[RMDB]
RNA sequence: GGGAACGACUCGAGUAGAGUCGAAAAGUACAUCAAGGUCAAGAAGGAAACUGGAAUGUACACACUGGUCAAGCUUUAUUACCUGCUGCGCAUCUAAAGGAAAAACAUAACAAUCUUGUGAACCAGAAAGAUACCCAGAGCAAAAGCAAUAAAGUACAGAUCACAUAUGGUUCGCCAUAUGUGAUCUAAAAGAAACAACAACAACAAC
Reactivity to 2A3 in 0.01 (KOAc 150mM, MgCl2 10mM, bicine 150mM(pH8.5), 24C), signal-to-noise 3, nucleotides 027 to 156: g020u030a000c000a020u030c040a060a010g020g010u010c050a050a070g040a040a050g210g030a120a050a020c020u020g030g040a140a000u010g030u030a010c040a000c010a010c060u040g030g020u120c060a060a040g020c000u050u080u040a060u110u080a110c010c040u020g010c020u040g010c020g000c040a040u010c030u090a060a030a000g010g060a090a050a020a010a010c040a040u120a060a050c060a080a100u050c030u060u060g020u020g010a020a020c030c000a010g050a050a070a010g010a010u010a050c000c020c030a010g010a020g020c010a000a060a110a000g000c000a030a070u110a100a060a010g030u030a060c040
Reactivity to DMS in 0.01 (KOAc 150mM, MgCl2 10mM, bicine 150mM(pH8.5), 24C), signal-to-noise 1, nucleotides 027 to 156: g050u010a070c030a040u000c050a220a250g030g000u000c040a130a100g030a100a180g030g030a070a060a240c050u010g000g000a110a090u020g010u010a010c080a060c070a060c130u000g000g000u030c070a090a300g000c030u000u000u000a040u030u010a040c040c010u000g000c030u010g030c150g040c010a060u010c000u000a030a160a160g020g000a070a100a110a160a070c060a080u000a090a100c130a020a140u000c050u000u000g050u000g010a110a140c010c000a090g000a090a120a060g000a090u000a040c030c000c030a080g000a180g000c040a020a050a050a060g000c000a050a030u000a020a030a000g030u000a050c170